[RMDB]
RNA sequence: GGGAACGACUCGAGUAGAGUCGAAAAGAUAUGGACGGACUUAGACAUGCGAGAGGGUCGGAAACGACCUAAUCGCAACAGCUAAUUCCGUCCUAAGUCAAACCCUCCUUUCUUCGGAAAGGAGGGAGUGAAAGUAACGGUUCGCCGUUACUUUCACAAAAGAAACAACAACAACAAC
Reactivity to DMS in 0.01 (KOAc 150mM, MgCl2 10mM, bicine 150mM(pH8.5), 24C), signal-to-noise 4, nucleotides 027 to 126: g010a020u000a120u020g020g010a020c010g000g010a020c300u000u000a020g030a070c130a230u000g020c000g010a020g020a300g000g010g000u000c000g030g000a010a040a080c000g020a010c000c000u010a010a090u000c000g040c020a010a030c290a130g000c000u010a020a020u000u000c010c000g020u000c000c000u000a000a060g000u000c000a140a140a170c020c010c000u010c000c000u000u000u000c000u030u010c250g020g000a010a000a010g010g010a000g000g000g010a010
Reactivity to 2A3 in 0.01 (KOAc 150mM, MgCl2 10mM, bicine 150mM(pH8.5), 24C), signal-to-noise 2, nucleotides 027 to 126: g000a020u030a010u090g000g010a000c000g000g000a000c000u000u000a000g010a030c050a300u300g000c020g010a020g010a010g000g000g030u000c010g030g000a020a040a000c010g000a000c000c010u010a030a020u000c000g030c000a020a010c030a020g020c000u010a000a010u000u000c000c010g000u000c000c000u000a000a000g000u010c010a000a020a150c010c010c000u010c000c010u000u030u000c020u020u100c300g230g010a000a020a020g010g010a000g000g000g040a050